[RMDB]
RNA sequence: GGGAACGACUCGAGUAGAGUCGAAAAGGCAGCCAGCGUUAUUUGUUCGAAAAUGCGAAAUGCGAGCCAGUGAAAAUCGCAACUCAGAGAUAAUGGCCGCCGUAAUUGUUGGCUCCCAACCAAAUUGCCUAUCACUCGUAUUCGUACGAGUGAUAGGAAAAGAAACAACAACAACAAC
Reactivity to 2A3 in 0.01 (KOAc 150mM, MgCl2 10mM, bicine 150mM(pH8.5), 24C), signal-to-noise 8, nucleotides 027 to 126: g010g010c030a000g000c000c000a010g000c010g020u030u060a080u070u180u180g150u020u050c050g090a100a090a110a120u200g090c020g040a050a040a060u120g010c030g010a070g010c010c020a070g000u090g190a120a040a020a130u060c030g000c080a100a100c090u080c160a040g040a000g000a110u040a110a090u070g000g000c010c000g010c010c020g000u000a010a050u090u300g000u000u010g010g000c000u010c000c010c000a020a010c000c000a040a030a060u190u270g040
Reactivity to DMS in 0.01 (KOAc 150mM, MgCl2 10mM, bicine 150mM(pH8.5), 24C), signal-to-noise 3, nucleotides 027 to 126: g000g000c180a030g000c010c000a020g020c160g000u010u000a040u000u030u030g040u000u020c100g010a110a110a150a110u020g020c020g050a060a130a050u010g050c010g000a160g030c040c040a040g000u010g000a050a040a070a120u000c030g020c030a050a080c160u000c120a130g040a090g000a050u010a080a150u020g000g000c000c030g000c000c060g000u020a020a070u010u040g030u020u000g000g020c030u000c130c030c010a060a130c080c010a020a060a070u090u010g000